[RMDB]
RNA sequence: GGGAACGACUCGAGUAGAGUCGAAAAUGUGGUGGUUUCUUUGUUUGGCAGAUCUGUAAUUGUAUCAGAGCGGCCUGAAACUACCACAGAGAUCAAAAAGGAGGGAGGCUGUGCUGAGAACGUUUUCCCGUGAGAAUGAAUUCGUUCAUUCUCACGGAAAAGAAACAACAACAACAAC
Reactivity to 2A3 in 0.01 (KOAc 150mM, MgCl2 10mM, bicine 150mM(pH8.5), 24C), signal-to-noise 7, nucleotides 027 to 126: u040g010u000g000g000u000g010g030u010u030u020c040u050u170u150g240u160u140u140g020g000c010a020g010a110u000c010u000g050u060a140a170u270u180g150u180a110u160c000a000g010a010g050c040g030g000c010c000u000g000a000a010a000c000u000a000c000c000a000c000a000g000a000g000a060u130c070a000a080a070a020a030g100g000a030g000g030g010a020g000g000c030u020g010u010g060c010u020g010a010g010a140a030c030g020u010u020u040u010c010
Reactivity to DMS in 0.01 (KOAc 150mM, MgCl2 10mM, bicine 150mM(pH8.5), 24C), signal-to-noise 3, nucleotides 027 to 126: u010g040u010g010g020u000g000g020u000u000u000c010u030u020u050g020u020u010u030g010g010c010a070g000a100u010c000u000g000u010a090a160u030u050g010u030a100u020c010a010g020a030g010c030g010g020c020c000u000g000a000a010a010c000u000a030c000c000a010c010a030g000a100g000a160u020c070a060a080a080a080a080g010g010a060g000g000g010a080g000g000c040u000g030u000g000c030u020g010a080g000a060a080c070g010u000u000u000u000c050
An RNA of 177 nucleotides, treated with 2A3 and DMS and read out base by base. The RNA was probed in 150 mM KOAc, 10 mM MgCl2 and 150 mM bicine (pH 8.5) at 24 C.